Structure probing data (DMS and 2A3) for a 207-nucleotide construct.
The RNA was probed in 150 mM KOAc, 10 mM MgCl2 and 150 mM bicine (pH 8.5) at 24 C.
The DMS profile rests on 2,133 reads.
RNA sequence: GGGAACGACUCGAGUAGAGUCGAAAACAUUUGGUGUUGUGAGGCAAUCGAGGAUCACAUCAGAGAACAUCUAUGUACCAAGACAGUCUCACCCCAAUUGCUCACAAGGCCGAAUCACCUGACACCAGUCACCAUCGAACAAGUCGCUGCCAACAUCGCAUACUAUCCCUUUCGAGGGAUAGUAUGCAAAAGAAACAACAACAACAAC
Reactivity to DMS in 0.01 (KOAc 150mM, MgCl2 10mM, bicine 150mM(pH8.5), 24C), signal-to-noise 2, nucleotides 027 to 156: c090a080u040u000u000g010g040u010g040u000u000g010u030g010a010g000g030c010a070a130u010c020g000a300g000g060a080u000c060a060c040a060u000c120a130g030a060g030a120a080c150a090u000c020u000a040u000g010u010a130c050c070a010a300g020a040c030a200g010u000c000u020c000a100c010c020c000c050a010a060u010u000g010c050u010c050a100c050a070a050g010g010c000c000g020a070a080u000c040a100c070c060u010g000a130c020a090c020c020a040g010u000c030a000c020c040a020u000c040g020a060a110c030a080a120g000u000c070g030c000u000g000c000c050a050a080c120a140u000c050
Reactivity to 2A3 in 0.01 (KOAc 150mM, MgCl2 10mM, bicine 150mM(pH8.5), 24C), signal-to-noise 6, nucleotides 027 to 156: c030a050u030u010u050g030g010u080g010u170u170g000u020g000a010g030g040c020a030a070u020c030g020a040g010g020a040u140c090a030c010a060u100c120a020g010a000g010a090a050c040a140u000c010u020a020u040g020u010a030c010c020a010a020g020a010c020a030g010u000c000u000c000a020c000c000c000c000a010a030u030u030g020c020u020c020a050c020a060a040g040g000c030c020g050a020a030u050c020a040c040c040u020g030a020c010a030c040c010a030g030u030c010a030c060c010a050u090c030g030a070a020c030a100a030g030u040c030g010c060u030g050c020c010a030a030c030a080u190c070
Reactivities are given for positions 27 through 156. The 2A3 profile rests on 6,616 reads.